[RMDB]
RNA sequence: GGGAACGACUCGAGUAGAGUCGAAAAAGGUUUGCAACUCUGUUAAGGAUACUCUGGCUUAUUAUGCUCACAGCGUGUUGUACAGAGUUUUUCCUUAUGACAUGGAUUCUGGUGUGUCAUCCUUUAGCUAUUGUAGGAUGUUCGCAUCCUACAAUAGAAAAGAAACAACAACAACAAC
Reactivity to 2A3 in 0.01 (KOAc 150mM, MgCl2 10mM, bicine 150mM(pH8.5), 24C), signal-to-noise 5, nucleotides 027 to 126: a000g080g010u050u050u070g030c010a030a020c020u000c020u070g030u110u070a030a020g050g000a010u010a020c000u010c010u030g010g010c000u110u080a090u200u090a060u300g010c010u030c060a120c030a040g000c010g000u030g040u050u050g030u070a130c000a000g000a000g000u000u000u010u030u010c000c000u020u020a060u050g020a020c010a030u060g080g010a110u200u100c070u170g120g050u070g020u010g010u060c000a030u070c020c020u050u080u070a050g000
Reactivity to DMS in 0.01 (KOAc 150mM, MgCl2 10mM, bicine 150mM(pH8.5), 24C), signal-to-noise 8, nucleotides 027 to 126: a040g000g010u000u010u000g010c110a050a060c030u000c040u000g000u000u000a050a050g010g000a020u000a020c010u000c010u000g000g000c050u000u010a090u010u010a040u010g010c010u010c210a230c180a090g010c060g020u000g010u000u000g010u010a070c010a020g000a020g000u000u000u000u000u000c000c000u010u000a040u010g010a030c050a040u000g010g010a130u000u000c110u000g010g010u000g010u000g000u000c030a040u000c080c010u000u000u000a110g010
Record summary:
This 177-nucleotide RNA was probed chemically with 2A3 and DMS. For DMS, 18,825 sequencing reads were counted. The reactions ran in a buffer of 150 mM KOAc, 10 mM MgCl2 and 150 mM bicine (pH 8.5), at 24 C. It was measured as part of the RMDB library 15KREP.